[RMDB]
RNA sequence: GGGAACGACUCGAGUAGAGUCGAAAAUCCCCUGAUGAGCCCAUGGCAGAGCGAAACCAGUGUGGUACGGUAUGGCAAAGCUUGCCUCGGAGCCAAGCGUGAGGGCUCCUGGGGCACCGCACGGGCGCAGUGCUGCGCGAGACUUUAGGCCCGUGACCUUACAUCUGUGGUUCGCCACAGAUGUAAGAAAAGAAACAACAACAACAAC
Reactivity to 2A3 in 0.01 (KOAc 150mM, MgCl2 10mM, bicine 150mM(pH8.5), 24C), signal-to-noise 3, nucleotides 027 to 156: u020c000c010c000c030u110g080a170u020g010a050g040c000c000c020a090u130g050g010c060a030g020a020g040c020g100a120a020a050c040c030a050g020u040g010u030g100g060u100a060c050g020g000u100a080u080g060g000c020a040a070a030g020c070u060u090g000c010c000u040c010g010g000a020g000c000c000a060a040g090c050g090u110g110a200g010g010g020c000u000c000c010u120g000g000g000g000c010a020c010c030g020c000a010c010g010g010g000c010g000c010a030g010u110g080c030u050g030c040g000c020g010a050g030a120c060u140u160u150a080g020g040c000c000c000g020u010g040a040c000
Reactivity to DMS in 0.01 (KOAc 150mM, MgCl2 10mM, bicine 150mM(pH8.5), 24C), signal-to-noise 1, nucleotides 027 to 156: u010c000c000c000c050u000g040a040u020g020a190g040c000c010c040a120u000g030g040c060a160g030a170g010c130g010a150a250a050c010c020a070g020u000g030u020g040g010u000a060c060g000g000u010a100u000g000g060c040a060a050a170g030c070u000u000g020c040c000u000c040g000g020a050g000c010c010a050a210g020c100g000u070g020a220g020g010g020c010u000c000c010u080g020g000g020g040c000a040c080c040g020c020a060c000g000g000g060c000g000c090a180g030u020g030c000u010g040c030g070c010g030a130g000a080c060u010u000u000a080g010g000c020c000c000g000u000g010a090c300
This 207-nucleotide RNA was probed chemically with 2A3 and DMS. The reactions ran in a buffer of 150 mM KOAc, 10 mM MgCl2 and 150 mM bicine (pH 8.5), at 24 C. For DMS, 2,224 sequencing reads were counted. The 2A3 profile rests on 2,130 reads.